[RMDB]
RNA sequence: GGGAACGACUCGAGUAGAGUCGAAAACUCCGGGCGAUCGAUGGUCACCGACAGCACCCCGUCGGCCAGGGUGACGGCGAGACCCGGGACAAUUGUCCGAGUGUCGAUCCGGUAGUUCGACAUGUGGACCUUCCCAUUCAUUCGUGAAUGGGAAGGUAAAAGAAACAACAACAACAAC
Reactivity to 2A3 in 0.01 (KOAc 150mM, MgCl2 10mM, bicine 150mM(pH8.5), 24C), signal-to-noise 3, nucleotides 027 to 126: c020u010c010c000g020g000g030c080g090a090u010c000g030a040u090g180g010u010c000a010c020c010g100a090c050a040g040c020a140c000c060c020c090g160u160c040g110g020c000c030a050g050g000g000u000g000a010c000g040g030c020g000a000g010a060c020c000c000g010g000g000a020c070a080a300u220u160g020u030c010c010g050a070g020u070g010u000c010g020a050u030c000c120g120g130u170a110g010u070u010c010g000a020c010a040u090g070u210g060g020
Reactivity to DMS in 0.01 (KOAc 150mM, MgCl2 10mM, bicine 150mM(pH8.5), 24C), signal-to-noise 4, nucleotides 027 to 126: c070u010c000c010g010g000g030c020g000a170u010c010g000a070u010g020g010u000c010a040c060c010g000a120c300a130g000c030a090c070c040c040c110g010u000c100g010g000c030c020a210g020g010g010u000g000a030c010g020g000c020g010a030g010a230c050c000c020g010g010g010a060c160a130a100u000u000g000u000c000c010g000a160g010u000g000u000c010g000a010u010c050c060g020g000u010a130g010u010u000c010g010a040c030a050u000g020u000g000g000